[RMDB]
RNA sequence: GGGAACGACUCGAGUAGAGUCGAAAAGAUAUGGACGGAUUAAGUGGCGCAUUAGAUCCGUUUGACGGAGCUCGGAAACGAGCUCCCGAGGAUCUAAUGCGAACUACCACCAUAUCCGUCCUAAGUCGAUAAUCUACUUGUUCGCAAGUAGAUUAUCAAAAGAAACAACAACAACAAC
Reactivity to 2A3 in 0.01 (KOAc 150mM, MgCl2 10mM, bicine 150mM(pH8.5), 24C), signal-to-noise 5, nucleotides 027 to 126: g060a020u130a060u280g000g010a000c010g000g020a010u060u040a260a120g010u010g010g030c020g000c000a000u010u010a010g010a010u020c020c020g050u190u170u250g020a020c010g000g010a000g010c010u010c010g020g010a060a110a080c010g010a010g010c000u000c000c000c000g000a000g000g000a000u000c010u000a000a000u000g010c010g000a000a000c000u020a010c010c000a010c010c000a020u030a000u240c000c000g000u010c010c000u010a060a010g070u040c060
Reactivity to DMS in 0.01 (KOAc 150mM, MgCl2 10mM, bicine 150mM(pH8.5), 24C), signal-to-noise 8, nucleotides 027 to 126: g010a100u010a300u010g010g010a020c010g010g000a020u000u000a290a200g010u000g010g020c010g000c000a020u000u000a010g000a010u000c000c010g010u000u010u010g020a180c300g020g000a020g020c000u000c000g010g000a110a130a300c010g010a000g010c000u000c000c000c000g000a060g000g010a010u000c000u000a000a000u000g000c000g000a010a020c090u010a300c010c000a030c010c030a180u000a050u000c000c010g010u000c000c000u000a010a070g010u000c090